[RMDB]
This 207-nucleotide RNA was probed chemically with 2A3 and DMS. Conditions: 150 mM KOAc, 10 mM MgCl2 and 150 mM bicine (pH 8.5), 24 C. It was measured as part of the RMDB library OK3TST. For 2A3 the reverse transcriptase was SuperScript II with manganese. DMS adducts were read by reverse transcription with MarathonRT.
RNA sequence: GGGAACGACUCGAGUAGAGUCGAAAAGUUGUGCAUUGGGUAUGUGUAGUGAGGGUCCAAAGUUAUUCAGGAUGGAGCAGGGGAACAGACUGACCUCAGAUUUCCUUCUAACAUGUAUACUAUCAUCAGUUAGCAAAUUGUCAAAGCUUUGGUAACAACGAGGGUAUACAUUCGUGUAUACCCUCGUAAAAGAAACAACAACAACAAC
Reactivity to 2A3 in 0.01 (KOAc 150mM, MgCl2 10mM, bicine 150mM(pH8.5), 24C), signal-to-noise 3, nucleotides 027 to 156: g040u050u040g040u030g000c070a080u040u020g030g000g030u130a080u090g050u030g000u040a090g070u060g030a100g030g000g010u030c010c010a060a050a000g030u080u040a140u100u130c030a040g000g020a040u060g050g000a040g030c040a040g010g020g000g030a050a000c000a030g100a060c070u050g080a080c010c030u090c020a050g010a080u040u060u030c000c000u010u100c010u010a040a040c030a030u070g050u110a080u070a190c090u080a050u080c010a000u020c040a020g000u020u020a010g000c050a010a060a190u060u080g080u100c060a150a010a000g070c000u040u050u060g040g040u130a040a010c060a000
Reactivity to DMS in 0.01 (KOAc 150mM, MgCl2 10mM, bicine 150mM(pH8.5), 24C), signal-to-noise 2, nucleotides 027 to 156: g030u010u000g000u010g020c070a070u000u010g000g010g040u010a050u020g030u010g000u000a070g010u010g000a060g010g010g060u000c030c010a040a050a100g040u000u000a060u000u000c050a090g000g010a100u010g010g010a080g050c050a150g020g020g000g020a070a100c070a190g000a130c040u010g010a150c060c010u000c020a130g000a210u010u000u000c030c020u000u000c030u000a060a000c020a080u000g020u010a100u000a100c030u000a120u000c060a130u000c100a060g020u000u000a080g000c120a050a050a110u000u000g050u010c040a080a110a140g020c070u000u000u010g020g010u010a090a090c090a110